This 207-nucleotide RNA was probed chemically with 2A3. For 2A3 the reverse transcriptase was SuperScript II with manganese. Source: RMDB library OK3TST, as collected in RNAgym. Conditions: 150 mM KOAc, 10 mM MgCl2 and 150 mM bicine (pH 8.5), 24 C.
[RMDB]
RNA sequence: GGGAACGACUCGAGUAGAGUCGAAAAGAUGAGUACUUCAGGCCUGAAAGUUUUCUGUCUUGCUAGGCUGCCCCUUUCCUGUUCCUUUGUCUGGAGAGAAAAGGCAUUUGCUAGGUAGGCUUCUUUGUUCAUGCCUGUGGACAUUCAGAAUCGUCCACCACUCGUCAUAGUUCGCUAUGACGAGUGGAAAAGAAACAACAACAACAAC
Reactivity to 2A3 in 0.01 (KOAc 150mM, MgCl2 10mM, bicine 150mM(pH8.5), 24C), signal-to-noise 1, nucleotides 027 to 156: g070a080u100g000a000g010u170a150c000u000u050c000a000g010g000c000c040u030g020a030a070a060g000u050u020u040u040c060u030g000u000c020u020u040g020c020u040a000g050g070c150u050g000c000c000c030c000u000u010u070c020c010u080g130u200u200c050c000u300u160u300g110u180c020u070g010g000a010g010a000g010a000a190a020a030g000g010c020a060u110u050u110g050c010u040a000g000g040u000a000g010g000c000u040u010c030u150u270u160g100u090u060c010a010u020g000c000c000u010g010u050g000g020a000c060a050u000u130c070a090g110a110a080u090c050g010u030c020c010a030